[RMDB]
RNA sequence: GGGAACGACUCGAGUAGAGUCGAAAAAAAAAGAGUUUCCAGGAACCUAAUAGGAAGCAAAGUUGUUGAUUACGUACUUCCUAUAUGGUUGACUUAACCAUUCCCUAGGUUCCUGGAAGCUAAAAAAGAUCAUAUAUUCGUUCGCGAAUAUAUGAUCAAAAGAAACAACAACAACAAC
Reactivity to DMS in 0.01 (KOAc 150mM, MgCl2 10mM, bicine 150mM(pH8.5), 24C), signal-to-noise 2, nucleotides 027 to 126: a060a020a040a100a050g000a020g010u000u000u000c000c000a010g000g010a030a000c010c000u000a040a040u000a010g010g010a020a000g000c080a050a080a110g000u000u000g000u010u010g000a200u000u000a020c070g050u000a070c000u000u000c000c000u000a010u010a060u000g000g000u000u000g000a120c240u020u010a030a020c000c000a050u010u010c100c050c160u010a000g010g010u000u000c000c000u000g010g000a010a000g010c000u010a000a060a080a060a060a070
Reactivity to 2A3 in 0.01 (KOAc 150mM, MgCl2 10mM, bicine 150mM(pH8.5), 24C), signal-to-noise 2, nucleotides 027 to 126: a000a000a010a000a000g090a000g000u000u000u000c010c000a000g000g000a000a000c000c000u010a020a020u010a030g030g010a000a010g040c140a140a110a070g020u030u060g120u180u150g190a240u200u220a020c030g020u060a020c020u010u000c010c020u000a020u000a000u020g010g020u000u010g040a070c030u110u160a020a000c010c010a020u050u050c040c000c030u000a010g000g000u000u000c000c000u000g000g000a000a000g000c000u010a000a000a000a000a090a040